[RMDB]
RNA sequence: GGGAACGACUCGAGUAGAGUCGAAAACACUAAGUGGGAGUAGUUAGGGGGUACUAAGCUGCCCUUUCAGGUGAACUAUGCAAUACAUUUAGAGUCUUAACUGCCUGCCUUGGACCAAAGAUCGCUAUAAUAGUGUCAGGUUCGCCUGACACUAUUAAAAAGAAACAACAACAACAAC
Reactivity to DMS in 0.01 (KOAc 150mM, MgCl2 10mM, bicine 150mM(pH8.5), 24C), signal-to-noise 3, nucleotides 027 to 126: c030a130c070u010a030a060g030u010g010g000g010a140g030u010a020g010u000u000a090g000g010g020g010g010u000a020c040u020a090a100g010c110u010g000c030c010c010u000u010u000c060a130g010g030u010g010a040a060c060u010a050u000g000c080a080a100u010a130c050a020u000u000u000a040g010a090g000u010c050u000u000a040a090c090u000g010c020c020u000g000c040c020u000u010g020g010a090c070c080a060a070a090g000a050u010c070g000c090u010a100
Reactivity to 2A3 in 0.01 (KOAc 150mM, MgCl2 10mM, bicine 150mM(pH8.5), 24C), signal-to-noise 1, nucleotides 027 to 126: c060a000c040u080a080a030g050u050g000g070g040a070g020u070a010g000u120u100a050g000g010g000g010g000u020a010c010u040a060a080g010c050u020g020c000c040c000u010u030u010c070a040g000g040u070g050a030a020c000u030a050u140g020c050a060a020u020a210c010a030u090u030u060a050g000a010g010u030c000u070u030a080a090c050u010g010c000c000u020g060c000c050u030u030g070g000a040c030c010a050a000a020g020a070u080c070g000c110u100a080